[RMDB]
RNA sequence: GGGAACGACUCGAGUAGAGUCGAAAAGCUUUAGGAACGAGGGACCGCAGUACUUCUUUCGCGGUCUAAACUCCACCUUGAUCCGGGCUUUUCCGAUGAACGCCGCCUGCUUCUUUGUGGUGUCCUACGUACCACUAGUGUUCGCACUAGUGGUACGAAAAGAAACAACAACAACAAC
Reactivity to 2A3 in 0.01 (KOAc 150mM, MgCl2 10mM, bicine 150mM(pH8.5), 24C), signal-to-noise 4, nucleotides 027 to 126: g010c020u080u120u230a110g000g010a020a000c030g020a010g030g020g010a000c020c010g000c030a030g050u130a160c090u130u250c030u130u270u170c080g000c000g000g000u000c000u000a010a010a010c000u020c040c020a010c000c000u020u020g010a020u000c000c000g000g000g000c000u020u000u000u000c030c020g020a110u120g050a080a010c060g000c030c020g070c030c040u090g020c060u090u060c010u080u120u100g060u050g010g030u040g060u050c000c010u050a060
Reactivity to DMS in 0.01 (KOAc 150mM, MgCl2 10mM, bicine 150mM(pH8.5), 24C), signal-to-noise 4, nucleotides 027 to 126: g020c030u000u000u000a170g040g020a030a060c020g020a010g000g020g020a010c010c000g030c010a090g010u000a070c260u000u010c160u000u010u000c120g010c000g000g010u000c010u000a020a070a130c080u000c090c080a280c020c000u000u000g010a060u000c010c010g000g000g000c000u000u000u000u000c020c050g000a090u000g010a070a080c120g000c030c070g000c050c030u000g010c050u000u000c040u000u000u000g020u010g010g000u000g020u000c020c010u000a140
This 177-nucleotide RNA was probed chemically with 2A3 and DMS. DMS adducts were read by reverse transcription with MarathonRT. The RNA was probed in 150 mM KOAc, 10 mM MgCl2 and 150 mM bicine (pH 8.5) at 24 C. Values cover nucleotides 27 to 126.